[RMDB]
RNA sequence: GGGAACGACUCGAGUAGAGUCGAAAACGCUUAUUCCGUCGAUGAAGGGUUCGCAGGCGCGGAUCACUCAAGAGCUGGUCCCGCAAGCUGAGGCGGCGGGCGACUCUGCCGGCAAGAAGUCGGCCUCCAAGUUCGGGGCGGCGUUUGCCGGCAUUGCCGCUACUGAAUCUUUCGAGAUUCAGUAGCGAAAAGAAACAACAACAACAAC
Reactivity to 2A3 in 0.01 (KOAc 150mM, MgCl2 10mM, bicine 150mM(pH8.5), 24C), signal-to-noise 2, nucleotides 027 to 156: c070g000c040u110u100a070u210u070c010c030g060u030c010g040a100u110g080a160a110g000g040g030u130u110c040g020c060a100g110g200c230g030c090g100g000a000u030c030a070c060u040c020a050a100g040a050g110c070u010g000g030u030c020c010c030g000c050a040a020g000c020u020g020a000g110g030c000g020g010c010g000g020g010c000g050a060c030u020c030u040g000c020c000g000g010c000a000a010g050a110a000g030u030c000g220g180c000c000u030c000c030a190a050g140u300u280c110g000g000g010g000c000g010g000c030g060u000u000u010g000c000c000g000g010c000a000u000u000g000c010